[RMDB]
Chemical mapping of a 177-nucleotide RNA with 2A3.
The 2A3 profile rests on 434 reads.
RNA sequence: GGGAACGACUCGAGUAGAGUCGAAAAGCACCGCGAUAGAGGUCUGUGGCCGCUCGCGACCCUGUCGCGGGGCGUGGGAUCACAUUGUCUGGCGUGGGCGCGGACGGUCACAGUUUGUGCCGGAUAACCCGCUAAGAUCCUUCGGGAUCUUAGCGGGAAAAGAAACAACAACAACAAC
Reactivity to 2A3 in 0.01 (KOAc 150mM, MgCl2 10mM, bicine 150mM(pH8.5), 24C), signal-to-noise 1, nucleotides 027 to 126: g080c000a000c000c000g160c000g050a090u000a000g130a100g040g030u110c000u050g000u000g030g000c000c000g000c000u150c000g060c000g290a300c000c000c000u130g050u090c000g000c000g000g000g000g000c010g000u040g000g130g030a160u240c020a050c000a170u050u300g070u000c000u100g100g000c000g000u070g000g000g000c000g000c000g000g000a000c000g000g100u010c000a000c000a000g000u000u000u000g000u000g000c190c000g000g000a000u210a000a000